[RMDB]
Chemical mapping of a 207-nucleotide RNA with 2A3. Source: RMDB library OK3TST, as collected in RNAgym. 2A3 is a SHAPE reagent: it acylates the 2'-hydroxyl of flexible nucleotides of all four kinds. 2A3 adducts were read by reverse transcription with SuperScript II with manganese.
RNA sequence: GGGAACGACUCGAGUAGAGUCGAAAACGACAGAGUGAAGAGGAGGAAGUUGGAAUUGGAGUGGAGAACGCAGCCUGUCACACUUUAUACAAAAUGAUUCAGAUUCUGUAGGUCAGGGGUGAGGCCUGAGACUGCAUUUCUAACAGGCACUCAGUGAUGCUUCCAAACAUUUCGAUGUUUGGAAGCAAAAAGAAACAACAACAACAAC
Reactivity to 2A3 in 0.01 (KOAc 150mM, MgCl2 10mM, bicine 150mM(pH8.5), 24C), signal-to-noise 1, nucleotides 027 to 156: c090g050a030c030a090g080a020g080u120g050a090a070g000a030g080g030a000g050g050a050a150g050u080u080g060g030a050a050u020u050g000g000a020g000u030g000g040a090g060a000a010c100g010c020a020g000c010c010u070g020u110c000a070c020a020c040u130u130u030a210u090a060c140a080a070a120a110u120g020a070u090u110c010a030g050a150u040u020c020u040g040u070a000g070g020u040c090a040g150g030g030g010u040g000a040g030g020c050c000u000g020a020g000a070c020u030g000c070a070u040u070u110c020u000a020a130c000a020g030g000c000a030c100u040c030a000g000u000g060a040